Chemical mapping of a 177-nucleotide RNA with 2A3.
The data come from the RNA Mapping Database (RMDB), library OK1LIB.
2A3 adducts were read by reverse transcription with SuperScript II with manganese.
Reactivities are given for positions 27 through 126.
The RNA was probed in 150 mM KOAc, 10 mM MgCl2 and 150 mM bicine (pH 8.5) at 24 C.
Reactivities are rounded to 0.1 and cut off at 0 and 3.

[RMDB]
RNA sequence: GGGAACGACUCGAGUAGAGUCGAAAACAAACAAACACGGCUCGCCGAAAGCACCAGUAGAAAAGCGAACGCUAAAGAAGCGUAACGCAAACGGCGAGACCGAAGCGAAAACGCAAAUCUACUGGAACGCACUUGAUCAGUUCGCUGAUCAAGUGCGAAAAGAAACAACAACAACAAC
Reactivity to 2A3 in 0.01 (KOAc 150mM, MgCl2 10mM, bicine 150mM(pH8.5), 24C), signal-to-noise 2, nucleotides 027 to 126: c050a000a140a100c080a000a080a000c040a000c040g010g020c010u010c000g000c000c000g050a080a000a000g120c050a120c060c000a000g000u000a000g020a000a100a010a000g010c000g000a000a020c010g040c020u170a140a110a130g140a150a000g000c000g000u060a080a000c000g000c000a030a030a030c050g000g000c010g000a030g080a070c000c000g020a030a000g000c080g130a000a190a000a000c020g030c110a100a130a140u000c000u000a000c000u000g000g020a010a000